This 207-nucleotide RNA was probed chemically with 2A3 and DMS.
It was measured as part of the RMDB library M2RFPK.
For DMS the reverse transcriptase was MarathonRT.
High DMS reactivity at an A or C suggests that its Watson-Crick edge is free.
RNA sequence: GGGAACGACUCGAGUAGAGUCGAAAAAGUUAGGUUCGCUAUGGUGCAACUCUUUAAGGCAAUAACGAACUAAUUCUAAACAAGUAAUGGAGAAAUGCCAGGGUCACUAUCUAGCCAUAAUAGUGCUGUAAGUGACUUAGAUUCGUCUAAGUCACAAUGCUUAUUCAAGUUUCGACUUGAAUAAGCAAAAAGAAACAACAACAACAAC
Reactivity to 2A3 in 0.01 (KOAc 150mM, MgCl2 10mM, bicine 150mM(pH8.5), 24C), signal-to-noise 6, nucleotides 027 to 156: a000g090u080u070a070g020g040u010u020c020g010c040u040a010u050g060g020u070g060c050a130a130c050u050c080u150u180u180a110a040g030g000c010a030a050u060a080a030c060g040a040a010c010u030a010a030u100u070c060u120a040a090a090c050a050a070g090u080a050a070u080g060g030a060g040a100a070a040u070g020c020c000a020g020g010g000u030c010a010c030u010a030u130c020u030a030g000c000c000a010u020a120a030u040a060g090u050g050c050u050g040u120a210a080g000u000g000a000c000u010u000a000g000a000u010u040c060g010u000c120u000a000a000g000u000c010a000c000a000a020
Reactivity to DMS in 0.01 (KOAc 150mM, MgCl2 10mM, bicine 150mM(pH8.5), 24C), signal-to-noise 4, nucleotides 027 to 156: a060g010u000u000a080g020g010u000u000c030g040c010u000a040u000g020g050u000g020c030a100a110c090u010c100u000u000u000a080a090g010g010c040a110a050u000a030a040c020g000a030a050c010u010a050a070u010u010c040u010a090a080a090c070a050a110g010u000a060a100u000g010g000a100g010a060a070a080u000g010c050c020a160g020g020g020u000c020a050c030u000a050u000c040u000a070g030c030c050a080u010a050a080u000a060g020u010g020c030u000g000u010a050a150g010u010g010a040c000u000u000a000g000a060u000u000c280g010u000c000u000a010a010g000u000c000a010c010a050a100
For DMS, 12,600 sequencing reads were counted. Reactivities are given for positions 27 through 156.